[RMDB]
RNA sequence: GGGAACGACUCGAGUAGAGUCGAAAAUGCAAAAGCCUGUACAAAACGGAGGUAAUACGUUAAUGCAGUUUUCCCGUAUAGCUCAAGAUGCCCCUUUUGGUAUAAUGGGUAUUGGGAAUAAUAUUACCGCUACUGCUGAAUCCUUUUCAUAUUUAUCCUUCAUGCUGCAGUUCGCUGCAGCAUGAAGAAAAGAAACAACAACAACAAC
Reactivity to 2A3 in 0.01 (KOAc 150mM, MgCl2 10mM, bicine 150mM(pH8.5), 24C), signal-to-noise 2, nucleotides 027 to 156: u140g000c000a030a030a060a070g000c000c050u030g010u010a060c030a040a220a070a010c050g060g000a080g030g030u080a030a060u100a000c080g020u040u110a010a020u140g000c020a030g020u030u040u020u060c030c000c000g010u100a150u110a030g060c020u030c050a030a020g040a260u030g000c000c000c020c040u050u070u150u270g060g010u060a040u060a060a080u130g000g020g010u010a060u020u080g000g000g030a020a020u110a120a040u070a070u060u090a010c000c020g000c100u040a020c030u050g000c000u020g080a050a060u130c000c000u040u100u100u100c160a120u130a110u230u140u090a090u150c000